Source: RMDB library M2RFPK, as collected in RNAgym. An RNA of 207 nucleotides, treated with 2A3 and read out base by base. The RNA was probed in 150 mM KOAc, 10 mM MgCl2 and 150 mM bicine (pH 8.5) at 24 C.

RNA sequence: GGGAACGACUCGAGUAGAGUCGAAAAGCUGCGUGAAACCUCGCUGUUUUCUUGGCUAACUUUCAGCGAGGUGAGGCAAGGCGUCAAAAAAAAGUUGGGAGCAGCAACGGCAAGCAAAAAAAAAGUUACAAGUUGCGAUGGUUCGCCAUCGCAACAACAGUGGUCUUCAGUUCGCUGAAGACCACUGAAAAGAAACAACAACAACAAC
Reactivity to 2A3 in 0.01 (KOAc 150mM, MgCl2 10mM, bicine 150mM(pH8.5), 24C), signal-to-noise 1, nucleotides 027 to 156: g010c000u010g010c020g040u130g140a210a020a010c000c000u000c000g000c000u000g010u000u020u030u020c080u140u200g080g000c100u020a000a000c020u010u000u000c000a020g000c020g030a010g000g000u000g000a000g000g070c040a040a030g050g000c010g030u060c040a060a050a080a040a000a000a000a040g120u200u080g030g000g000a050g020c010a000g010c020a060a010c010g090g000c010a050a040g000c090a070a050a010a000a000a000a000a000a000g000u010u010a000c010a070a070g000u010u000g000c000g000a000u000g010g030u030u070c190g060c090c000a000u000c000g000c000a010a000c000a000a000